[RMDB]
RNA sequence: GGGAACGACUCGAGUAGAGUCGAAAAUACGCGAGGUUCGCCUCGCGUAAAAGAGGAGCGUAAACGUGAGCGUACGUAGUGCUGUACAUCGUUCCUACACGAAUGCACAUGGUUUCGACCAUGUGAAACCGUAAGAGACUUUCGAGUCUCUUACGGUAAAAGAAACAACAACAACAAC
Reactivity to DMS in 0.01 (KOAc 150mM, MgCl2 10mM, bicine 150mM(pH8.5), 24C), signal-to-noise 4, nucleotides 027 to 126: u000a070c010g020c000g010a020g000g030u000u000c230g020c000c010u000c000g000c000g020u000a000a020a070a090g000a100g000g010a050g000c010g020u010a050a110a080c070g010u000g020a100g020c160g010u010a040c080g010u010a100g010u000g020c020u010g030u010a080c130a090u000c010g000u000u000c000c000u010a080c180a060c190g020a110a120u010g000c010a010c000a010u000g000g010u000u010u010c160g010a010c010c010a010u000g020u010g000a010a030
Reactivity to 2A3 in 0.01 (KOAc 150mM, MgCl2 10mM, bicine 150mM(pH8.5), 24C), signal-to-noise 4, nucleotides 027 to 126: u020a000c000g000c000g000a000g020g040u050u070c130g060c050c010u000c010g000c000g000u010a000a000a000a010g120a020g030g020a030g000c040g030u170a120a040a070c050g030u050g060a050g100c050g070u090a010c080g070u120a020g100u070g080c030u060g060u070a010c000a040u020c010g010u000u010c000c000u040a020c100a010c020g190a120a060u270g010c010a010c000a010u000g010g040u040u060u120c160g080a000c000c000a000u010g000u000g000a070a020